[RMDB]
RNA sequence: GGGAACGACUCGAGUAGAGUCGAAAAGUGCAGACCUAUACGCACGAACUAACCUGAAACUACUUAGACCGAACAGUGGGCAAAUACAUGUCCCUUACACUCAGGCCCCGUCCGGGUUUGUACACUGCCAUACGUUCGGAUUCGUCCGAACGUAUGGAAAAGAAACAACAACAACAAC
Reactivity to 2A3 in 0.01 (KOAc 150mM, MgCl2 10mM, bicine 150mM(pH8.5), 24C), signal-to-noise 3, nucleotides 027 to 126: g010u000g000c000a000g000a060c000c030u030a040u050a130c100g050c080a020c050g030a030a010c040u110a020a030c000c000u010g040a070a060a040c070u170a010c040u150u160a060g110a110c040c090g080a120a030c040a080g010u200g050g000g000c020a080a040a070u300a070c110a130u040g040u050c000c010c000u000u060a040c080a030c040u020c010a010g010g000c020c010c020c000g030u040c000c030g000g000g030u000u000u030g000u050a020c040a010c080u080g020
Reactivity to DMS in 0.01 (KOAc 150mM, MgCl2 10mM, bicine 150mM(pH8.5), 24C), signal-to-noise 3, nucleotides 027 to 126: g030u000g050c010a040g010a100c060c040u020a200u030a110c110g000c100a070c080g000a070a060c160u000a080a210c060c000u000g000a040a060a100c120u000a020c070u000u000a050g010a100c070c060g000a060a070c170a080g000u010g000g000g040c030a030a080a120u000a090c190a090u010g000u000c000c010c020u020u010a070c150a060c130u000c020a040g000g010c070c020c030c010g000u000c040c070g000g020g030u000u020u010g020u010a040c120a110c110u000g000

Description
Source: RMDB library OK2TST, as collected in RNAgym. This 177-nucleotide RNA was probed chemically with 2A3 and DMS. The 2A3 profile rests on 2,181 reads.